[RMDB]
Chemical mapping of a 177-nucleotide RNA with DMS and 2A3. Reactivities are given for positions 27 through 126. For 2A3 the reverse transcriptase was SuperScript II with manganese. It was measured as part of the RMDB library RFM100. For DMS, 1,869 sequencing reads were counted. For DMS the reverse transcriptase was MarathonRT.
RNA sequence: GGGAACGACUCGAGUAGAGUCGAAAAAGUGGAUCUACGGAUCCACAUAUUGCCUGAUGAAGAAUACAUGAACGAAAAAAGCGCCUGAUCGGCGCUUUUUAUUGGCGACGGAGGUUACGACCUCCGAGCUUAAGCAGCGGUUCGCCGCUGCUUAAGCAAAAGAAACAACAACAACAAC
Reactivity to DMS in 0.01 (KOAc 150mM, MgCl2 10mM, bicine 150mM(pH8.5), 24C), signal-to-noise 1, nucleotides 027 to 126: a080g020u000g070g000a040u000c030u000a110c190g030g040a020u000c000c030a000c000a000u010a010u020u060g000c000c000u000g000a130u010g000a080a080g020a200a080u090a110c110a110u010g000a130a120c040g010a000a070a020a010a030a000g030c000g060c000c000u050g010a120u030c300g000g040c000g000c010u000u040u000u010u020a020u030u010g000g040c070g010a160c000g000g000a030g000g000u000u000a150c160g000a050c000c000u010c000c000g000a050
Reactivity to 2A3 in 0.01 (KOAc 150mM, MgCl2 10mM, bicine 150mM(pH8.5), 24C), signal-to-noise 2, nucleotides 027 to 126: a000g000u010g000g010a010u030c000u020a040c240g130g010a000u000c000c000a000c000a000u040a010u010u110g060c000c040u060g020a080u120g060a060a210g080a270a030u130a080c050a090u190g120a150a010c010g160a010a000a060a000a050a000g000c000g000c020c050u300g150a300u130c070g000g000c000g000c000u020u010u000u000u010a020u020u010g040g000c010g030a040c070g000g010a010g000g020u020u060a170c300g050a040c170c000u000c010c010g000a030